[RMDB]
RNA sequence: GGGAACGACUCGAGUAGAGUCGAAAAAAUGAUGAUAAAUUCGCUGUCACCCACGGGUUAGAUGUAACUGAUACUCAUUACAUUCUGAUAAUUUGAGUCGACUCGAGUGUCGGUGUGCAAAACGCUUAUCGCUUGCUCGGAGUGACGAUGCAUAUGCGGCAUAGUGUGCUUUCGAGCACACUAUGCCAAAAGAAACAACAACAACAAC
Reactivity to 2A3 in 0.01 (KOAc 150mM, MgCl2 10mM, bicine 150mM(pH8.5), 24C), signal-to-noise 1, nucleotides 027 to 156: a000a000u220g080a080u030g070a070u150a230a000a030u140u050c070g000c040u000g010u010c080a050c020c020c020a190c070g000g000g060u060u100a010g030a190u140g100u140a000a070c040u000g000a010u030a040c010u000c080a140u100u220a120c030a110u150u180c110u220g100a150u040a280a220u000u000u290g000a000g050u000c000g120a070c000u070c230g000a000g000u010g010u010c000g040g000u050g030u050g010c070a080a080a080a080c100g000c010u050u100a000u120c000g010c110u020u110g040c000u000c050g000g000a050g000u000g000a010c000g110a040u050g000c000a000u190a030u290g100c070
An RNA of 207 nucleotides, treated with 2A3 and read out base by base. The reactions ran in a buffer of 150 mM KOAc, 10 mM MgCl2 and 150 mM bicine (pH 8.5), at 24 C. It was measured as part of the RMDB library OK3TST.